[RMDB]
RNA sequence: GGGAACGACUCGAGUAGAGUCGAAAACUCAAAGCCUCAGAUGCUGGAUAAGUCGGGGGAGGCAGAAUCGCUUUGGGAUGACAUUCAGAAAGGCUGGAGUGAUUAUUUGGAAGAGAAAAGCCUCCCUCCUUAGAGACUUCUUCGGAAGUCUCUAAGGAAAAGAAACAACAACAACAAC
Reactivity to 2A3 in 0.01 (KOAc 150mM, MgCl2 10mM, bicine 150mM(pH8.5), 24C), signal-to-noise 5, nucleotides 027 to 126: c030u020c010a080a090a010g030c020c010u110c070a070g080a180u130g030c010u010g020g040a080u060a200a060g030u110c050g060g020g000g000g000a000g000g000c020a010g070a030a100u050c020g030c050u060u050u060g110g020g020a020u020g020a030c020a040u060u030c020a040g140a220a170a030g140g010c030u030g020g010a040g010u110g090a300u010u050a060u060u080u120g070g040a030a010g020a010g010a030a060a000a040g010c020c000u000c000c000c000u010
Reactivity to DMS in 0.01 (KOAc 150mM, MgCl2 10mM, bicine 150mM(pH8.5), 24C), signal-to-noise 2, nucleotides 027 to 126: c020u010c020a170a090a080g010c020c090u010c170a100g020a100u000g020c010u020g000g000a080u010a040a120g010u010c130g010g000g010g020g000a000g020g030c020a050g010a140a110u000c020g000c020u020u020u000g020g000g010a030u000g030a030c030a030u000u000c030a090g010a180a110a090g000g000c050u010g000g000a000g010u000g000a090u020u000a010u010u000u020g000g000a010a030g000a040g000a060a030a120a080g000c020c000u000c000c000c010u000
This 177-nucleotide RNA was probed chemically with 2A3 and DMS. DMS adducts were read by reverse transcription with MarathonRT. The RNA was probed in 150 mM KOAc, 10 mM MgCl2 and 150 mM bicine (pH 8.5) at 24 C. It was measured as part of the RMDB library RFM100.